[RMDB]
RNA sequence: GGGAACGACUCGAGUAGAGUCGAAAACUUAUCCGGUUUUAACGCUGUUUUAUUGGCGCAAAGGUUUACGGAUAAACAACUAAUAAUUAAACCUUUUGUGUGCGAAACGUGGUAGUUUAACGUACUCACUGCCCCCAGGGAUUCGUCCCUGGGGGAACGAGAGCUUAUGAUUCGUCAUAAGCUCUCGAAAAGAAACAACAACAACAAC
Reactivity to DMS in 0.01 (KOAc 150mM, MgCl2 10mM, bicine 150mM(pH8.5), 24C), signal-to-noise 1, nucleotides 027 to 156: c050u010u030a000u000c010c010g060g000u000u000u020u000a300a070c020g020c010u000g000u010u010u000u010a120u010u040g030g000c010g000c000a020a020a020g050g010u010u000u010a100c020g020g000a030u000a020a070a210c030a150a150c090u000a130a180u020a140a150u000u010a020a000a030c010c010u000u000u000u010g020u020g040u000g000c030g020a070a040a030c010g000u030g040g030u000a100g000u000u010u000a040a110c080g050u010a030c010u010c010a080c030u010g020c000c000c000c000c000a030g000g010g010a130u010u020c300g000u000c000c000c010u010g000g020g020g010g000a000a000
Reactivity to 2A3 in 0.01 (KOAc 150mM, MgCl2 10mM, bicine 150mM(pH8.5), 24C), signal-to-noise 5, nucleotides 027 to 156: c010u020u020a000u010c000c000g000g040u000u010u020u040a030a020c010g010c010u030g180u160u120u110u210a160u170u250g030g000c030g000c050a030a010a010g000g010u000u000u000a000c010g000g000a000u040a050a110a030c030a020a020c080u200a080a140u120a170a030u220u120a020a020a010c000c000u020u040u100u120g040u000g010u000g000c040g030a070a060a000c030g000u050g090g130u130a140g050u070u010u060a120a010c010g000u000a020c000u020c070a090c100u120g020c000c000c000c000c000a000g020g000g000a010u040u070c100g060u040c090c000c000u010g000g000g000g000g000a000a000
Structure probing data (DMS and 2A3) for a 207-nucleotide construct. It was measured as part of the RMDB library M2RFPK. For DMS, 2,355 sequencing reads were counted. 2A3 adducts were read by reverse transcription with SuperScript II with manganese. The reactions ran in a buffer of 150 mM KOAc, 10 mM MgCl2 and 150 mM bicine (pH 8.5), at 24 C.